[RMDB]
RNA sequence: GGGAACGACUCGAGUAGAGUCGAAAAGGUGAGAGCGUUUAACUUAAGUCUUUUUUAUUAGCUUAAAAAAACUAUAUACAAGUGGUGGUAGUCCGCCACUCUAAGGGGACGCCUUUAGAAGAAGAGGGAAAGGCACUAAGCUUCGGCUUAGUGCCAAGAUUUGAGUGAAGUUCGCUUCACUCAAAUCAAAAGAAACAACAACAACAAC
Reactivity to 2A3 in 0.01 (KOAc 150mM, MgCl2 10mM, bicine 150mM(pH8.5), 24C), signal-to-noise 1, nucleotides 027 to 156: g040g050u030g020a040g010a010g030c020g000u050u100u080a080a100c020u070u070a020a060g010u110c110u030u220u050u000u000u030a210u080u090a170g000c020u020u030a000a010a010a010a010a010a010c100u130a140u020a060u020a300c030a030a020g010u000g000g020u000g050g050u060a090g160u010c050c000g000c010c000a000c000u000c000u020a020a030g000g010g000g000a000c000g060c000c050u040u090u080a050g000a100a010g000a010a010g030a090g020g020g010a010a120a110g000g000c000a010c000u040a020a000g010c000u020u070c290g010g030c020u000u010a000g000u000g010c010c000a000a010